[RMDB]
RNA sequence: GGGAACGACUCGAGUAGAGUCGAAAAGAUAUGGAACUAGAUGACGUGUUCUCAUGGGACAUGCGUGAGUGUCGGAAACGACACGAACGCAACAGCCCAGAGAACACGUCAUCUAGUUCCUAAGUCAGUUGUAAUUUAUGUUCGCAUAAAUUACAACAAAAGAAACAACAACAACAAC
Reactivity to DMS in 0.01 (KOAc 150mM, MgCl2 10mM, bicine 150mM(pH8.5), 24C), signal-to-noise 1, nucleotides 027 to 126: g000a060u000a300u000g000g000a020a020c000u000a030g010a010u010g000a020c010g000u020g010u000u000c000u000c010a140u000g010g000g000a020c060a220u000g000c000g030u000g000a300g010u020g000u020c000g000g000a110a110a300c010g010a020c000a010c010g000a300a020c030g000c010a000a070c300a250g000c000c000c000a000g000a040g000a010a000c000a000c000g000u000c000a000u000c000u000a000g000u020u000c000c000u000a020a070g000u000c030a180